Chemical mapping of a 177-nucleotide RNA with 2A3 and DMS. For 2A3 the reverse transcriptase was SuperScript II with manganese. Reactivities are given for positions 27 through 126. The 2A3 profile rests on 4,777 reads. The data come from the RNA Mapping Database (RMDB), libraries RFM100 and RFMREP. The reactions ran in a buffer of 150 mM KOAc, 10 mM MgCl2 and 150 mM bicine (pH 8.5), at 24 C.
RNA sequence: GGGAACGACUCGAGUAGAGUCGAAAAGAAAGAGACAUGCUGUCCACAGUGUGUUUGAUAAGCUGACAUGGGACAGGAAUUCUUUUCACUGUUUUGUCAGUUUAUCAAACCCAUACCUGGAUGAUAAUGCUGAUUAACUGUUCGCAGUUAAUCAGCAAAAAGAAACAACAACAACAAC
Reactivity to 2A3 in 0.01 (KOAc 150mM, MgCl2 10mM, bicine 150mM(pH8.5), 24C), signal-to-noise 5, nucleotides 027 to 126: g090a010a080a000g140a010g040a030c060a100u160g060c060u080g020u010c010c000a040c070a110g020u010g000u000g010u020u000u020g000a010u000a010a000g000c000u000g010a010c000a040u150g120g070g040a000c000a010g000g040a020a000u160u130c150u110u210u050u010c140a220c180u010g030u000u060u060u020g000u000c000a000g000u000u000u000a000u000c000a000a000a010c000c010c000a020u040a050c000c030u010g030g000a020u080g040a050u080a220a070
Reactivity to DMS in 0.01 (KOAc 150mM, MgCl2 10mM, bicine 150mM(pH8.5), 24C), signal-to-noise 4, nucleotides 027 to 126: g010a060a060a070g000a140g000a050c080a070u030g020c110u010g020u000c020c000a000c190a210g000u010g000u010g010u020u000u000g020a010u000a010a010g010c000u000g010a020c000a040u060g040g030g000a010c000a000g020g010a020a000u040u020c210u020u030u000u000c020a100c000u010g000u000u000u010u010g000u010c000a010g000u000u000u000a000u010c000a000a010a010c000c030c010a010u010a090c190c300u000g010g000a030u000g010a120u030a120a140